[RMDB]
Source: RMDB library OK2TRN, as collected in RNAgym. An RNA of 177 nucleotides, treated with DMS and 2A3 and read out base by base. Values cover nucleotides 27 to 126. The reactions ran in a buffer of 150 mM KOAc, 10 mM MgCl2 and 150 mM bicine (pH 8.5), at 24 C.
RNA sequence: GGGAACGACUCGAGUAGAGUCGAAAACAGCUUGUCGAUGGAGAAACGUGGUUCGAUUUCCAUAAACAGCGGAGAACCGUGGUUCCAGAUACCUUUAGCAUCGGAGUUACCGCCGAAGAAUACCGGAAGGAUUAUAGUGAUUCGUCACUAUAAUCCUAAAAGAAACAACAACAACAAC
Reactivity to DMS in 0.01 (KOAc 150mM, MgCl2 10mM, bicine 150mM(pH8.5), 24C), signal-to-noise 9, nucleotides 027 to 126: c090a130g000c040u000u010g030u010c100g010a140u000g000g000a050g010a040a060a080c070g010u010g010g020u000u000c030g000a200u000u010u010c030c020a070u010a070a090a090c140a100g000c090g010g010a180g000a050a060c030c030g010u000g010g000u000u000c030c050a100g000a100u000a040c070c130u000u000u010a070g010c060a090u010c030g000g010a080g010u000u000a100c100c060g010c020c020g010a060a070g010a090a100u000a090c050c030g010g010a280
Reactivity to 2A3 in 0.01 (KOAc 150mM, MgCl2 10mM, bicine 150mM(pH8.5), 24C), signal-to-noise 9, nucleotides 027 to 126: c020a000g040c030u080u120g060u100c040g050a050u030g050g020a050g060a100a110a030c030g030u050g010g050u060u020c020g060a150u110u100u000c010c010a020u110a060a260a060c060a030g070c050g070g010a060g000a020a010c000c010g020u020g010g050u050u010c010c000a020g010a080u130a090c010c030u080u120u120a040g020c010a040u040c020g030g000a030g020u060u050a050c020c040g000c010c020g010a050a030g070a090a070u110a130c030c030g040g040a040